Overview
Chemical mapping of a 207-nucleotide RNA with 2A3. The 2A3 profile rests on 420 reads. It was measured as part of the RMDB library VIROID. For 2A3 the reverse transcriptase was SuperScript II with manganese. Conditions: 150 mM KOAc, 10 mM MgCl2 and 150 mM bicine (pH 8.5), 24 C.

[RMDB]
RNA sequence: GGGAACGACUCGAGUAGAGUCGAAAAAGUUUCGUCCUUUUGGACUCAUCAGUAGGAAAACACAUUCCUAGACUUCGCGUGGGUGCGGGACAGCGGUCAGUGCGCCGUGCAUGCUGUGUUUAUCUCAAUCAAGCACAGAUGUACUGGACGAGUGCCGGGGUUAGAGACAGUUCGCUGUCUCUAACCCAAAAGAAACAACAACAACAAC
Reactivity to 2A3 in 0.01 (KOAc 150mM, MgCl2 10mM, bicine 150mM(pH8.5), 24C), signal-to-noise 1, nucleotides 027 to 156: a010g000u000u010u040c020g010u010c050c000u020u030u070u300g050g030a030c020u120c000a150u010c010a010g120u160a050g050g000a000a000a000a020c130a030c000a170u000u030c060c000u000a000g150a110c120u130u070c170g000c000g090u010g000g020g030u030g000c060g000g000g010a020c100a020g000c030g000g010u000c000a080g090u000g160c080g000c010c030g120u000g040c000a020u210g230c020u000g000u000g090u010u000u090a300u040c200u000c300a230a210u040c080a080a000g010c000a000c000a000g000a000u000g000u000a000c080u140g000g050a030c030g020a030g030u150g000c040c020g000